An RNA of 207 nucleotides, treated with 2A3 and DMS and read out base by base. For 2A3 the reverse transcriptase was SuperScript II with manganese. DMS adducts were read by reverse transcription with MarathonRT. The reactions ran in a buffer of 150 mM KOAc, 10 mM MgCl2 and 150 mM bicine (pH 8.5), at 24 C. High 2A3 reactivity points to a flexible backbone, as in loops and unpaired stretches.
RNA sequence: GGGAACGACUCGAGUAGAGUCGAAAAUGUUCGUUCGCGAACACCAUUCCUAAGUCUGGUCAACAGCGAUGUAGUUGGGAGCUAUAUCGGAAACGAUAUAGCUUUGAUCAACCACAUCGACAUGACCAGAUAUGGAGAAGCUACUAUUCGUAGUAGCCAUCAUGUUUCGAUUCGUCGAAACAUGAUGAAAAGAAACAACAACAACAAC
Reactivity to 2A3 in 0.01 (KOAc 150mM, MgCl2 10mM, bicine 150mM(pH8.5), 24C), signal-to-noise 6, nucleotides 027 to 156: u100g010u000u000c000g010u040u040c300g010c010g110a000a000c020a020c020c010a120u070u030c010c000u020a160a040g030u000c000u000g000g000u000c020a060a050c040a290g030c010g010a000u000g000u010a040g000u000u010g030g010g000a010g000c000u000a000u000a000u010c010g020g050a080a080a070c010g000a010u000a000u000a000g020c010u010u040u030g010a010u010c000a000a000c000c010a000c000a000u010c000g070a160c010a070u040g000a000c010c000a000g000a000u010a000u040g020g000a120g030a070a020g030c000u020a000c000u010a040u150u140c230g110u090a000g000u000a000g000c000
Reactivity to DMS in 0.01 (KOAc 150mM, MgCl2 10mM, bicine 150mM(pH8.5), 24C), signal-to-noise 2, nucleotides 027 to 156: u000g000u000u000c000g000u000u000c300g020c040g010a000a020c000a050c050c060a230u000u000c000c000u000a120a280g010u000c000u010g000g020u000c020a050a080c100a200g010c010g000a020u020g020u000a000g010u020u000g000g000g000a030g010c000u000a000u000a010u000c010g000g000a180a060a240c010g010a010u000a000u000a000g010c000u000u000u010g020a080u020c000a010a010c000c010a000c000a000u000c010g030a020c070a300u000g000a020c000c000a010g010a010u000a160u020g020g000a120g010a130a160g000c000u000a000c000u000a110u000u010c270g000u000a000g010u000a010g000c010